The record gives the reactivity of an RNA of 207 nucleotides to 2A3. The RNA was probed in 150 mM KOAc, 10 mM MgCl2 and 150 mM bicine (pH 8.5) at 24 C.
RNA sequence: GGGAACGACUCGAGUAGAGUCGAAAAGGUGUGCAUGGCUAGGCCGGGGGGUUGGGCGUCCCCUGUAACCCGAAAUCGCCCUUAUGCGGGGGCCGAAAACUUGGGGGCGGCAUGUCCUCCAGUCCUUCCUUCCCAGACUCCUCGAUGAGGUCUCGUCGAAAUUAAUUGUGUUCGCACAAUUAAUUUCAAAAGAAACAACAACAACAAC
Reactivity to 2A3 in 0.01 (KOAc 150mM, MgCl2 10mM, bicine 150mM(pH8.5), 24C), signal-to-noise 2, nucleotides 027 to 156: g030g010u080g010u080g130c090a130u190g080g050c050u070a040g010g010c010c000g010g000g000g000g000g000u000u000g000g000g000c000g000u000c020c000c000c010u010g030u030a000a010c000c010c010g010a010a020a040u270c000g000c000c000c000u010u130a120u080g000c010g000g000g010g000g000c000c000g000a000a010a000a000c020u040u030g000g000g000g000g000c020g060g100c200a100u210g010u050c000c000u000c000c000a010g010u030c010c000u010u070c000c000u000u020c020c060c010a000g010a000c000u000c010c000u000c000g010a030u020g060a010g010g000u000c010u010c010g070u070c080